[RMDB]
RNA sequence: GGGAACGACUCGAGUAGAGUCGAAAAUCAAUGACGUUGUACCAUGCAUCGUUGCUGUACACCUUUGGACUCAGAUCUAGAUGACCGCACAGAUAAUUAUGUGGGCCCAAUGAACGAGCCCACAUUGCUUAGGAUCACGUUUCGACGUGAUCCUAAGAAAAGAAACAACAACAACAAC
Reactivity to DMS in 0.01 (KOAc 150mM, MgCl2 10mM, bicine 150mM(pH8.5), 24C), signal-to-noise 2, nucleotides 027 to 126: u010c050a040a030u010g000a100c090g010u000u000g000u000a080c140c110a120u020g000c030a050u000c110g020u020u000g040c010u000g000u000a040c100a080c030c040u000u010u000g030g010a080c040u000c060a060g000a060u000c030u000a060g000a090u020g000a110c070c080g030c020a020c130a030g000a120u000a120a090u000u000a020u000g040u000g000g010g020c040c000c020a100a140u020g000a130a120c180g000a060g000c000c000c000a000c010a020u000u010g000
Reactivity to 2A3 in 0.01 (KOAc 150mM, MgCl2 10mM, bicine 150mM(pH8.5), 24C), signal-to-noise 2, nucleotides 027 to 126: u050c020a000a110u100g050a030c070g000u040u020g000u050a120c050c090a100u160g000c000a020u070c090g080u050u120g030c040u060g020u050a040c030a030c020c030u020u050u150g090g000a030c000u020c110a050g050a290u030c010u100a030g030a280u100g050a110c030c020g000c050a050c030a120g140a110u170a140a080u300u170a030u070g000u030g010g000g020c000c030c000a110a110u180g070a110a010c070g000a030g020c030c010c000a000c000a000u000u020g000